Source: RMDB library M2RFPK, as collected in RNAgym. The record gives the reactivity of an RNA of 207 nucleotides to DMS and 2A3.
RNA sequence: GGGAACGACUCGAGUAGAGUCGAAAAUGCCUAAUUCAAGGAAUUAGCGUGCCUUCAUGCUAAGGGUUUGAUAUCUGCUAAAACCCGGUGCAUUCAUCAAUGCAGGUUAAGCCAAAGUGAUGUCCCGAAAAGAACGCAAGGUUCGCCUUGCGUUCAACCAUAUCGGAGAGUUCGCUCUCCGAUAUGGAAAAGAAACAACAACAACAAC
Reactivity to DMS in 0.01 (KOAc 150mM, MgCl2 10mM, bicine 150mM(pH8.5), 24C), signal-to-noise 3, nucleotides 027 to 156: u000g010c030c020u000a040a060u000u000c050a120a110g010g030a060a070u000u010a050g010c020g000u000g010c030c050u000u010c060a070u010g030c050u000a300a170g010g000g010u000u000u000g000a200u000a060u010c060u000g000c080u000a070a030a040a050c000c000c010g020g070u030g000c020a060u000u000c060a100u000c080a080a160u000g020c040a060g020g000u010u000a040a130g020c000c020a010a080a130g020u000g020a060u010g000u000c010c000c010g000a110a060a100a170g010a040a010c010g030c000a040a020g000g020u000u010c300g020c000c000u010u000g010c000g010u000u000c000a000a090
Reactivity to 2A3 in 0.01 (KOAc 150mM, MgCl2 10mM, bicine 150mM(pH8.5), 24C), signal-to-noise 5, nucleotides 027 to 156: u130g020c010c000u020a030a030u040u030c100a140a090g110g010a070a030u030u000a030g030c050g050u040g030c020c020u080u160c070a050u080g000c010u050a020a080g020g010g010u040u010u010g050a050u060a090u130c100u080g030c050u070a030a030a020a050c000c010c020g020g010u010g000c010a050u040u160c010a040u050c030a100a090u120g030c020a010g000g040u060u090a060a030g030c020c030a100a030a000g030u020g030a050u040g050u030c010c000c010g010a040a060a010a050g000a000a000c000g000c000a000a010g000g000u030u070c140g060c040c010u000u010g000c000g000u000u000c000a000a000
The 2A3 profile rests on 4,222 reads.